[RMDB]
RNA sequence: GGGAACGACUCGAGUAGAGUCGAAAAGGUUCGAUUCCCGCCACCUCCACAGUGGGCAUUCUCAAGAGUGUUCAGUGUGGGGGUGCACCGGUUUCGACAGGGCGGGCAAUGGUGAGCAGGCAACCCGACAACCACACGAAUUCGUUCGUGUGGUUGUAAAAGAAACAACAACAACAAC
Reactivity to 2A3 in 0.01 (KOAc 150mM, MgCl2 10mM, bicine 150mM(pH8.5), 24C), signal-to-noise 2, nucleotides 027 to 126: g090g000u050u040c020g010a010u020u000c030c000c010g020c050c000a000c000c000u000c000c010a020c010a100g140u000g020g020g000c000a010u040u020c090u020c130a290a060g010a010g010u000g030u000u000c000a020g080u040g000u000g030g020g000g000g000u010g000c010a020c000c000g030g000u000u020u020c010g010a020c020a060g000g080g030c020g000g010g000c040a070a010u010g080g020u110g040a020g050c030a010g000g000c030a120a090c010c010c000g000
Reactivity to DMS in 0.01 (KOAc 150mM, MgCl2 10mM, bicine 150mM(pH8.5), 24C), signal-to-noise 3, nucleotides 027 to 126: g000g010u020u020c030g000a120u000u000c060c010c090g000c300c000a030c000c010u020c010c000a000c000a020g030u010g010g000g000c000a010u010u000c000u030c300a200a170g000a000g040u000g010u000u000c000a030g000u010g030u000g010g000g000g000g010u000g020c120a050c130c100g020g000u000u000u020c020g010a050c110a100g000g010g000c000g000g010g010c090a080a050u010g020g020u000g000a100g000c050a050g010g000c040a110a140c010c030c030g000